An RNA of 177 nucleotides, treated with DMS and 2A3 and read out base by base.
For DMS, 1,541 sequencing reads were counted.
It was measured as part of the RMDB library OK2TRN.
The reactions ran in a buffer of 150 mM KOAc, 10 mM MgCl2 and 150 mM bicine (pH 8.5), at 24 C.
The 2A3 profile rests on 1,484 reads.
RNA sequence: GGGAACGACUCGAGUAGAGUCGAAAACCUGAGCGCUUGUGGCAGAGGAGGGCCUUCGCCCGCUCCGCCGUAGAGCACAGCGCGGUGGCCCUGAAUCCUGUUCAGAACGCCCUGGUGGCAGCCCUAAGGAGGUAACACUGUUCGCAGUGUUACCUCCAAAAGAAACAACAACAACAAC
Reactivity to DMS in 0.01 (KOAc 150mM, MgCl2 10mM, bicine 150mM(pH8.5), 24C), signal-to-noise 2, nucleotides 027 to 126: c010c000u000g030a080g030c000g000c090u000u000g030u020g010g010c000a020g000a090g010g010a080g010g010g010c010c080u010u010c060g000c010c060c220g010c010u000c030c060g020c050c160g030u000a070g000a070g030c020a120c140a090g000c130g030c040g020g010u000g000g000c000c010c000u000g000a090a090u010c100c030u010g000u020u000c040a090g010a050a070c090g000c010c010c010u000g000g020u000g000g000c160a100g000c020c000c020u030a150a120
Reactivity to 2A3 in 0.01 (KOAc 150mM, MgCl2 10mM, bicine 150mM(pH8.5), 24C), signal-to-noise 1, nucleotides 027 to 126: c010c000u010g010a020g010c020g040c070u110u080g090u070g250g000c030a020g000a010g090g120a040g000g010g000c000c000u080u110c030g010c020c010c030g000c000u000c000c020g240c000c070g100u230a050g000a010g050c010a010c040a070g060c080g000c010g050g010u020g010g000c000c000c000u010g080a060a060u080c050c000u060g050u130u290c050a040g010a200a000c020g000c010c000c010u050g010g010u020g040g020c060a040g080c010c000c020u040a170a060